[RMDB]
RNA sequence: GGGAACGACUCGAGUAGAGUCGAAAAGAUCAGCGCAAGGACGGCACUCGACCCGACAUCCUCGACGCGUUCGACCCGAUCACGGUGUGGGCCUACGACGAGUGCGACCCCACCGCGCCGAGCCGCGACCACGACUGAGUUUCGACUCAGUCGUGGUAAAAGAAACAACAACAACAAC
Reactivity to DMS in 0.01 (KOAc 150mM, MgCl2 10mM, bicine 150mM(pH8.5), 24C), signal-to-noise 2, nucleotides 027 to 126: g010a100u000c010a170g050c100g040c060a140a050g020g000a110c070g000g000c030a060c030u010c050g000a090c080c020c040g000a060c120a060u000c050c020u010c070g010a090c070g000c060g000u000u000c030g000a110c040c030c030g000a130u030c050a090c180g010g000u000g010u000g020g010g010c080c010u000a060c080g020a170c090g010a160g010u010g000c020g000a110c020c010c020c020a090c070c040g040c040g030c060c020g000a020g000c010c000g000c110g000
Reactivity to 2A3 in 0.01 (KOAc 150mM, MgCl2 10mM, bicine 150mM(pH8.5), 24C), signal-to-noise 2, nucleotides 027 to 126: g010a110u120c020a010g020c030g050c040a040a040g010g030a040c040g090g030c050a040c020u100c030g130a160c000c050c010g010a040c010a110u040c000c040u030c030g070a060c010g030c040g040u090u060c040g050a050c000c020c050g010a160u080c030a020c070g000g020u050g000u130g020g000g030c000c030u090a040c010g190a030c060g080a080g040u070g030c020g100a140c010c000c000c000a020c050c020g000c000g000c010c010g030a000g000c050c000g030c040g060

Structure probing data (DMS and 2A3) for a 177-nucleotide construct. For DMS the reverse transcriptase was MarathonRT. For 2A3 the reverse transcriptase was SuperScript II with manganese. Reactivities are given for positions 27 through 126. The RNA was probed in 150 mM KOAc, 10 mM MgCl2 and 150 mM bicine (pH 8.5) at 24 C. The DMS profile rests on 1,588 reads.